[RMDB]
RNA sequence: GGGAACGACUCGAGUAGAGUCGAAAAGAUAUGGAGUUAGGGAGCAAAUGCGAAACAACUCGGAAACGAGUUGGAACCGCAUUGCGACGAUCUAACUCCUAAGUCAAAACGCCGCUUCGGCGGCGAAGACAACAAUUCUCUUCGGAGAAUUGUUGUCAAAAGAAACAACAACAACAAC
Reactivity to DMS in 0.01 (KOAc 150mM, MgCl2 10mM, bicine 150mM(pH8.5), 24C), signal-to-noise 2, nucleotides 027 to 126: g010a010u010a300u010g000g000a020g010u000u000a000g000g010g000a060g000c010a020a030a050u000g040c000g000a050a060a300c020a000a000c000u000c040g000g000a160a040a160c030g000a020g000u020u000g000g000a100a160c290c000g000c030a010u000u000g010c010g000a120c250g000a020u000c000u010a020a010c000u000c000c000u000a000a020g020u000c020a080a110a080a230c030g020c000c000g000c010u000u010c150g090g000c010g000g010c000g000a030a070
Reactivity to 2A3 in 0.01 (KOAc 150mM, MgCl2 10mM, bicine 150mM(pH8.5), 24C), signal-to-noise 1, nucleotides 027 to 126: g040a000u070a040u190g010g010a000g000u000u000a010g000g000g010a020g000c020a110a110a200u020g000c000g010a070a050a010c000a000a000c000u020c030g010g000a100a100a020c010g000a000g000u000u010g000g000a030a020c080c000g010c000a000u000u010g020c000g030a140c000g000a000u010c000u020a010a000c000u020c010c000u010a030a010g010u000c000a010a000a130a200c000g000c000c000g000c030u070u130c300g170g030c000g000g020c000g010a010a030

Chemical mapping of a 177-nucleotide RNA with DMS and 2A3. Values cover nucleotides 27 to 126. For 2A3, 2,459 sequencing reads were counted.